Chemical mapping of a 177-nucleotide RNA with 2A3. The data come from the RNA Mapping Database (RMDB), library OK1LIB. For 2A3 the reverse transcriptase was SuperScript II with manganese. As a SHAPE reagent, 2A3 marks flexible, mostly unpaired nucleotides at the ribose 2'-OH. The reactions ran in a buffer of 150 mM KOAc, 10 mM MgCl2 and 150 mM bicine (pH 8.5), at 24 C. For 2A3, 908 sequencing reads were counted. Reactivities are given for positions 27 through 126.
[RMDB]
RNA sequence: GGGAACGACUCGAGUAGAGUCGAAAAAUGUGCACCUAUAUGUGUAUAUAGGUGCACAUAUAUGUGUAUAUAUGCACAUAUAUGUGCACCUAUAUGUGUAUAUAUGCGCAUAUAUGUGUAUAUAUGCGUGCCAAAAUGCAUUCGUGCAUUUUGGCACAAAAGAAACAACAACAACAAC
Reactivity to 2A3 in 0.01 (KOAc 150mM, MgCl2 10mM, bicine 150mM(pH8.5), 24C), signal-to-noise 1, nucleotides 027 to 126: a010u050g000u010g010c060a090c040c000u000a000u000a000u000g090u000g040u060a010u020a000u000a010g020g000u020g020c000a000c000a000u010a000u000a000u000g100u000g010u000a000u010a020u020a030u300g010c000a000c000a000u000a000u000a000u010g000u040g000c000a000c000c040u010a010u000a000u000g000u020g020u000a000u000a000u000a010u070g010c000g020c010a020u040a000u000a010u020g150u040g060u070a000u020a000u010a010u190g080c050